[RMDB]
RNA sequence: GGGAACGACUCGAGUAGAGUCGAAAAGAUAUGGACCUUCUUGAGGCUGGUAUCAUCGAUCUUGAGAACAUCGGAAACGAUGUUCUCAAGGGAGAUAUGGCCAGCCAAUGAUGGAAGGUCCUAAGUCCUACAGUGCAGACUUCGGUCUGCACUGUAGAAAAGAAACAACAACAACAAC
Reactivity to DMS in 0.01 (KOAc 150mM, MgCl2 10mM, bicine 150mM(pH8.5), 24C), signal-to-noise 2, nucleotides 027 to 126: g010a130u000a300u010g010g010a000c000c000u010u000c000u000u010g000a110g010g020c010u000g020g020u000a060u000c130a080u000c000g000a300u020c000u000u020g000a010g020a020a000c020a020u000c000g010g020a170a090a140c020g050a020u000g000u010u000c000u000c000a000a000g000g000g000a300g000a020u000a020u000g010g000c020c000a020g000c000c010a040a010u000g000a120u000g000g000a040a010g030g010u000c000c010u010a000a120g000u000c040